Structure probing data (DMS and 2A3) for a 177-nucleotide construct.
The 2A3 profile rests on 37,094 reads.
High DMS reactivity at an A or C suggests that its Watson-Crick edge is free.
The RNA was probed in 150 mM KOAc, 10 mM MgCl2 and 150 mM bicine (pH 8.5) at 24 C.
The data come from the RNA Mapping Database (RMDB), library TTRDEL.
For DMS the reverse transcriptase was MarathonRT.
The DMS profile rests on 14,820 reads.
RNA sequence: GGGAACGACUCGAGUAGAGUCGAAAAGAUAUGGAUCGUUCGACAUGUCGCGCACGGUCGGAAACGACCGGAUCGACAACAGCGAGACGAUCCUAAGUCAAAACCCCACGUCUUCGGACGUGGGGAACAAUCAGUUUAUCUUCGGAUAAACUGAUUGAAAAGAAACAACAACAACAAC
Reactivity to DMS in 0.01 (KOAc 150mM, MgCl2 10mM, bicine 150mM(pH8.5), 24C), signal-to-noise 9, nucleotides 027 to 126: g000a050u000a300u000g010g000a010u000c010g020u000u000c010g000a110c120a200u000g010u010c010g020c150g010c300a250c010g010g010u000c000g000g000a070a100a190c010g010a010c000c000g010g000a100u000c000g000a020c000a020a070c250a120g010c020g010a090g000a020c000g000a010u000c000c000u000a000a070g010u000c050a100a080a120a160c010c010c000c000a010c000g000u000c000u000u010c240g010g000a010c000g030u000g000g010g000g010a000a010
Reactivity to 2A3 in 0.01 (KOAc 150mM, MgCl2 10mM, bicine 150mM(pH8.5), 24C), signal-to-noise 8, nucleotides 027 to 126: g020a020u070a050u150g000g000a010u010c010g010u040u010c010g080a130c100a190u140g010u030c020g000c010g000c060a090c090g000g000u000c010g000g010a090a070a020c010g000a000c000c000g010g000a040u070c010g020a010c010a140a050c060a020g080c010g020a140g050a080c000g000a010u000c000c000u010a060a010g050u020c030a020a050a150a300c000c000c000c000a000c000g000u000c000u060u130c300g160g000a000c000g000u000g000g000g000g000a000a010